Structure probing data (2A3 and DMS) for a 177-nucleotide construct. The data come from the RNA Mapping Database (RMDB), library OK1LIB.
[RMDB]
RNA sequence: GGGAACGACUCGAGUAGAGUCGAAAAAGAACUGCAAACGAUAAUAAUCUCUAUGUGGGUGCUCCAGCUUUAGCUGCUGCUUAAUCCAACGAGGAUUGAAGGUGUGACGGGCAACAGACCCGGAAAACGUGAUAGGCACGUUCGCGUGCCUAUCACGAAAAGAAACAACAACAACAAC
Reactivity to 2A3 in 0.01 (KOAc 150mM, MgCl2 10mM, bicine 150mM(pH8.5), 24C), signal-to-noise 1, nucleotides 027 to 126: a000g080a040a000c030u100g000c120a160a000a000c000g000a000u020a220a000u010a000a000u120c010u010c020u070a140u120g020u040g000g000g060u050g000c040u000c000c000a010g000c000u170u040u030a060g000c000u000g000c000u000g000c000u110u000a060a000u000c000c010a060a140c300g050a100g080g000a010u030u040g170a020a020g000g000u100g000u000g200a040c000g000g050g060c040a060a040c010a300g000a210c000c000c000g010g050a000a000a000a000
Reactivity to DMS in 0.01 (KOAc 150mM, MgCl2 10mM, bicine 150mM(pH8.5), 24C), signal-to-noise 1, nucleotides 027 to 126: a060g000a100a140c070u010g000c020a140a030a040c100g030a000u000a060a030u020a110a040u010c000u000c060u040a300u120g030u000g000g040g000u000g020c090u040c230c020a030g040c000u000u000u010a040g000c060u010g000c020u000g020c010u100u100a030a080u000c000c000a140a120c000g040a090g000g020a000u010u000g000a080a030g020g000u000g020u000g010a170c000g030g000g000c030a190a050c300a240g040a140c060c000c020g000g010a080a020a030a160

Annotation:
The DMS profile rests on 1,163 reads. DMS adducts were read by reverse transcription with MarathonRT. The 2A3 profile rests on 557 reads.